Structure probing data (2A3 and DMS) for a 207-nucleotide construct.
The 2A3 profile rests on 1,609 reads.
The data come from the RNA Mapping Database (RMDB), library OK3TST.
Conditions: 150 mM KOAc, 10 mM MgCl2 and 150 mM bicine (pH 8.5), 24 C.
The DMS profile rests on 2,102 reads.
RNA sequence: GGGAACGACUCGAGUAGAGUCGAAAAUAUAGAAACCAUCACAGAUUUUCUUUCUGCAUGAGACAAAUGAGAUAUAGUCUUGCCUGAAGCUCAGCGACUAUGGUGGGCAGGGAAGAAACAUCAAGGAGAUACCAAAUGAAGAAAUGCUUGAAGACUAUCAGUCAUAUAGUUUCGACUAUAUGACUGAAAAAGAAACAACAACAACAAC
Reactivity to 2A3 in 0.01 (KOAc 150mM, MgCl2 10mM, bicine 150mM(pH8.5), 24C), signal-to-noise 2, nucleotides 027 to 156: u180a000u010a030g090a100a090a000c020c010a000u060c040a020c040a080g060a050u070u060u110u060c020u010u110u010c030u080g030c020a040u110g030a030g030a100c040a030a120a050u180g020a080g010a020u050a020u020a110g030u000c000u020u090g070c000c040u080g020a060a040g010c000u020c080a040g040c020g090a060c070u150a050u150g030g060u030g010g020g000c000a020g030g010g000a030a020g000a010a050a010c040a030u060c010a010a040g030g000a060g020a020u040a070c010c060a090a020a050u110g010a010a040g010a020a060a050u070g020c040u060u060g030a010a010g040a020c020u070a030
Reactivity to DMS in 0.01 (KOAc 150mM, MgCl2 10mM, bicine 150mM(pH8.5), 24C), signal-to-noise 2, nucleotides 027 to 156: u000a140u010a180g000a090a150a110c030c020a050u010c030a020c040a120g010a070u000u000u010u000c030u010u000u000c020u000g020c070a140u000g000a070g000a040c060a070a010a080u000g010a150g030a160u010a130u000a140g010u000c010u010u010g000c000c020u010g000a080a140g010c040u000c010a060g040c010g000a150c050u000a050u020g010g030u010g020g030g080c020a080g000g010g000a030a030g000a090a070a140c040a040u000c070a040a140g010g010a110g040a120u000a140c080c030a030a110a140u000g000a050a060g010a100a050a120u000g020c040u010u010g000a050a100g000a100c070u000a210